[RMDB]
RNA sequence: GGGAACGACUCGAGUAGAGUCGAAAAGCUGCAAAAGAGCCGUCUCGCUGGGUAAAAUCAGGAUGUGCCGCGGAACCCGCUCCUCAGCUAGUCACACUUCGGAAGCGCGGGCAACGCAGGUAUUAUCCUAAUCCUUAUCGUUCGCGAUAAGGAUUAGAAAAGAAACAACAACAACAAC
Reactivity to DMS in 0.01 (KOAc 150mM, MgCl2 10mM, bicine 150mM(pH8.5), 24C), signal-to-noise 9, nucleotides 027 to 126: g010c020u010g000c080a070a070a110a140g010a070g020c010c010g000u010c020u000c030g010c060u020g000g010g010u020a050a070a090a100u020c130a030g000g010a020u000g010u000g000c010c000g010c020g010g000a240a290c020c000c000g010c010u000c020c040u000c020a060g010c120u010a030g000u010c210a080c160a300c050u000u010c080g000g000a050a040g020c170g010c030g010g000g010c050a030a210c010g000c000a050g040g010u000a020u020u030a010u000c000
Reactivity to 2A3 in 0.01 (KOAc 150mM, MgCl2 10mM, bicine 150mM(pH8.5), 24C), signal-to-noise 9, nucleotides 027 to 126: g020c000u110g030c030a060a060a040a040g070a040g010c020c010g040u010c010u010c030g040c050u090g000g000g060u160a090a090a030a090u130c050a030g030g000a030u030g000u020g020c000c000g000c000g000g010a060a060c000c000c010g000c010u030c010c000u020c010a020g010c060u100a040g090u180c040a030c000a010c070u020u030c020g030g040a110a060g080c020g010c060g070g000g010c040a030a010c010g000c030a030g000g000u010a030u100u160a020u020c000